Structure probing data (2A3 and DMS) for a 177-nucleotide construct. For DMS the reverse transcriptase was MarathonRT. For DMS, 3,271 sequencing reads were counted. The data come from the RNA Mapping Database (RMDB), library OK2TRN. Reactivities are given for positions 27 through 126. Conditions: 150 mM KOAc, 10 mM MgCl2 and 150 mM bicine (pH 8.5), 24 C.
[RMDB]
RNA sequence: GGGAACGACUCGAGUAGAGUCGAAAAAGCCAGUUCCAGGAUCACCACCUACCAUAACUUUGGCUACGUGGCACUGACCAUCAAGCAGCUGACCAUCUAUGACGCCGGCACCUACACCUGCCGCGCCCACAUAGUUGGCAUUCGUGCCAACUAUGUGAAAAGAAACAACAACAACAAC
Reactivity to 2A3 in 0.01 (KOAc 150mM, MgCl2 10mM, bicine 150mM(pH8.5), 24C), signal-to-noise 4, nucleotides 027 to 126: a010g070c010c010a030g030u050u030c020c020a040g050g060a060u070c030a020c040c020a050c010c020u050a060c020c030a090u070a220a180c030u090u090u150g020g000c000u040a040c060g050u060g020g000c040a050c130u070g070a120c030c000a070u090c050a070a040g030c010a010g000c030u040g060a130c030c010a050u030c030u110a120u160g070a060c110g030c090c010g020g000c000a030c010c020u100a070c040a040c040c020u020g020c000c000g010c040g000c010c000
Reactivity to DMS in 0.01 (KOAc 150mM, MgCl2 10mM, bicine 150mM(pH8.5), 24C), signal-to-noise 4, nucleotides 027 to 126: a110g000c040c010a070g020u000u010c050c040a090g020g010a080u000c040a090c030c010a050c050c030u000a090c090c040a030u010a070a100c120u000u010u000g010g020c090u000a070c130g020u000g030g010c080a080c100u010g000a080c040c030a040u010c100a080a100g010c060a050g020c030u010g010a100c050c020a040u010c080u010a060u010g010a080c070g020c060c060g030g030c010a030c070c030u020a090c150a100c130c110u000g000c010c020g000c050g020c010c070